[RMDB]
RNA sequence: GGGAACGACUCGAGUAGAGUCGAAAAUAAAUCCAUCAGAGCCCUCAUCUGUUCGAUGGAGAGUCAGGCUCAGAAAUAAAUGAGCCGACAAGAUGAGGAGGUGUCGAGGAAAACUCGACGCCAAAAACAGUCACUAGCAUUUCGAUGCUAGUGACUGAAAAGAAACAACAACAACAAC
Reactivity to DMS in 0.01 (KOAc 150mM, MgCl2 10mM, bicine 150mM(pH8.5), 24C), signal-to-noise 2, nucleotides 027 to 126: u030a010a080a100u000c000c000a000u010c030a210g010a150g050c170c000c000u000c000a000u000c000u000g000u000u000c130g000a040u020g000g000a050g000a130g000u000c120a090g030g000c000u010c000a000g000a130a100a190u090a030a110a120u000g000a020g020c000c000g010a050c170a040a030g000a000u000g000a010g000g000a230g000g000u010g000u000c030g000a000g000g000a110a070a070a220c010u000c000g000a020c000g000c000c000a040a040a060a070a100
Reactivity to 2A3 in 0.01 (KOAc 150mM, MgCl2 10mM, bicine 150mM(pH8.5), 24C), signal-to-noise 5, nucleotides 027 to 126: u150a010a040a010u030c050c000a000u020c010a040g070a050g170c030c010c000u010c000a000u010c030u010g070u110u250c040g030a030u050g090g000a060g010a010g120u080c160a140g000g000c010u000c000a000g050a010a280a030u270a020a070a050u030g000a000g000c000c000g000a010c040a020a000g000a000u000g010a010g010g010a020g020g000u010g000u000c000g000a000g010g090a070a130a080a180c000u000c000g000a000c000g000c000c000a090a010a000a030a000
The record gives the reactivity of an RNA of 177 nucleotides to DMS and 2A3.